RNA sequence: GGGAACGACUCGAGUAGAGUCGAAAAGCCACGAGCAGUGCCACGACUGCCGCAGCCGCUGCUGCCACGGCGGGGGCGGCCUGGGCCUCCGAGCCCCCGUACCAGGCCUCUCGGUACCACCGCGACGCCAGGGACCACUAUUCGUAGUGGUCCCUGGAAAAGAAACAACAACAACAAC
Reactivity to DMS in 0.01 (KOAc 150mM, MgCl2 10mM, bicine 150mM(pH8.5), 24C), signal-to-noise 1, nucleotides 027 to 126: g000c010c050a090c060g020a190g000c150a030g020u010g000c000c000a040c090g020a140c080u000g020c040c000g000c080a040g020c000c000g060c020u020g000c020u000g000c060c030a060c060g000g000c010g000g000g020g000g070c030g000g020c060c030u020g040g000g000c010c010u000c070c100g060a220g020c040c000c000c050c060g040u010a040c040c030a050g010g010c060c010u030c000u030c000g010g000u080a150c000c000a180c040c020g020c030g000a040c140g010
Reactivity to 2A3 in 0.01 (KOAc 150mM, MgCl2 10mM, bicine 150mM(pH8.5), 24C), signal-to-noise 2, nucleotides 027 to 126: g050c020c010a040c020g040a020g000c090a000g040u050g110c050c030a070c090g080a010c050u060g030c020c000g030c020a030g080c000c020g000c040u080g040c020u070g040c010c000a130c090g050g000c020g000g000g000g000g000c000g000g000c000c010u080g000g010g000c000c010u030c020c020g020a020g030c000c000c000c010c040g020u080a110c020c040a030g020g000c000c000u010c000u000c000g050g000u040a040c000c010a040c000c040g010c020g040a030c050g000